[RMDB]
RNA sequence: GGGAACGACUCGAGUAGAGUCGAAAAGGACUCCGUGAGGAGUCCGUGCAGCGAGAGCUGCACAAGGGCUAAGUGACUGUCGGUGCCCCUCCUCUACGAUGUUGAGUAGAGGAGAGUAGUCGUCUCACGAUUUAUAGUGAGACUGACAUGACAGUAGAUGUUUCAACUCAUUCGUGAGUUGAAACAUAAAAGAAACAACAACAACAAC
Reactivity to 2A3 in 0.01 (KOAc 150mM, MgCl2 10mM, bicine 150mM(pH8.5), 24C), signal-to-noise 2, nucleotides 027 to 156: g000g000a000c000u000c010c000g030u030g030a020g000g000a000g000u000c000c000g000u000g000c000a000g020c010g010a080g000a000g010c000u000g020c010a000c010a010a010g010g000g020c020u120a060a030g070u020g080a010c000u000g000u000c000g000g100u060g000c000c000c000c000u000c000c000u000c000u000a000c010g030a060u080g010u100u070g040a000g000u010a000g000a000g020g000a000g000a000g000u010a000g000u000c000g000u000c000u020c000a000c000g030a020u010u220u020a180u110a070g000u000g000a000g000a000c000u010g000a000c010a030u060g000a000c000a000g000u000a010g030
Reactivity to DMS in 0.01 (KOAc 150mM, MgCl2 10mM, bicine 150mM(pH8.5), 24C), signal-to-noise 2, nucleotides 027 to 156: g040g030a010c010u000c010c000g010u000g010a140g030g000a030g010u000c000c010g000u010g030c020a020g020c020g010a300g000a300g030c020u000g030c000a000c000a060a080g000g020g000c000u000a080a280g020u000g000a030c000u000g020u000c000g000g030u000g020c040c000c020c000u010c000c000u000c000u000a030c010g020a200u000g010u000u000g020a300g040u010a030g000a000g010g000a010g010a020g010u000a050g010u000c020g010u000c000u000c000a000c000g010a280u000u000u000a150u000a130g030u000g010a050g000a030c010u000g060a020c020a080u000g000a050c020a040g050u000a070g000